[RMDB]
RNA sequence: GGGAACGACUCGAGUAGAGUCGAAAACUGGCCAUGGCGCAGCUGCUGGUGCACACAGCGGCCAAGGCCAGCUCCACAUUCCUCCCUCCAGCUCCCCACUUCACCGGAGACCGAGCCCUGCAUGCAGAAAGUCGAUUAGAUUCGUCUAAUCGACUUUAAAAGAAACAACAACAACAAC
Reactivity to 2A3 in 0.01 (KOAc 150mM, MgCl2 10mM, bicine 150mM(pH8.5), 24C), signal-to-noise 5, nucleotides 027 to 126: c000u000g000g000c010c010a040u030g010g000c090g000c140a150g000c040u010g000c010u050g040g100u290g040c040a020c000a000c000a080g010c000g020g010c000c010a030a040g000g000c000c000a000g000c010u030c010c010a100c000a030u100u050c000c010u020c000c010c000u030c010c000a010g010c020u050c000c010c000c000a020c020u070u070c020a040c030c020g050g010a060g020a040c010c030g020a010g020c000c000c000u030g020c030a040u050g010c010a010g130
Reactivity to DMS in 0.01 (KOAc 150mM, MgCl2 10mM, bicine 150mM(pH8.5), 24C), signal-to-noise 6, nucleotides 027 to 126: c030u010g000g010c010c000a120u000g000g030c000g000c030a110g010c010u000g000c230u000g010g040u020g020c100a100c070a160c000a010g020c000g000g000c000c000a020a040g010g010c010c000a000g010c060u010c040c030a080c160a170u010u000c020c020u000c030c010c010u010c030c040a090g000c040u000c040c020c020c030a070c050u000u000c070a060c030c030g000g010a110g000a060c050c030g010a120g000c040c010c010u010g010c060a050u020g010c080a100g010
The record gives the reactivity of an RNA of 177 nucleotides to 2A3 and DMS. Source: RMDB libraries RFM100 and RFMREP, as collected in RNAgym. For DMS the reverse transcriptase was MarathonRT. For 2A3, 6,331 sequencing reads were counted. Conditions: 150 mM KOAc, 10 mM MgCl2 and 150 mM bicine (pH 8.5), 24 C.